RNA sequence: GGGAACGACUCGAGUAGAGUCGAAAAUUGAAGAAACGUAUUACAGUCAUUGAUGGUCAUUCACAUACCGUACUUCAAAAUGGUCAAAUUUAUAACAAUGAUGCAUUAGCACAAACAGGUACAGCACAUCUGUGGAAGCUUUCGAGCUUCCACAGAUAAAAGAAACAACAACAACAAC
Reactivity to 2A3 in 0.01 (KOAc 150mM, MgCl2 10mM, bicine 150mM(pH8.5), 24C), signal-to-noise 3, nucleotides 027 to 126: u080u070g070a060a030g010a040a110a000c050g070u050a050u080u110a040c090a090g110u040c010a070u050u140g090a050u110g000g050u010c020a030u120u080c040a020c000a070u110a060c080c000g030u040a030c010u090u120c020a020a160a000a010u050g020g000u010c000a000a270a270u100u210u090a270u170a190a060c020a060a040u050g020a010u000g070c020a110u070u100a100g010c070a000c000a080a210a000c030a010g120g000u110a070c030a000g050c000a000c010
Reactivity to DMS in 0.01 (KOAc 150mM, MgCl2 10mM, bicine 150mM(pH8.5), 24C), signal-to-noise 2, nucleotides 027 to 126: u020u040g000a110a040g010a060a090a040c190g000u000a070u020u010a090c180a070g010u000c000a110u010u090g020a070u020g000g000u000c010a000u010u010c120a090c200a010u000a000c150c100g000u000a070c030u000u000c100a020a130a000a030u020g000g000u000c040a060a060a000u010u010u000a090u060a130a170c300a000a090u010g000a040u020g010c010a100u000u000a010g010c030a050c170a010a020a040c070a020g010g000u000a020c140a080g010c200a060c110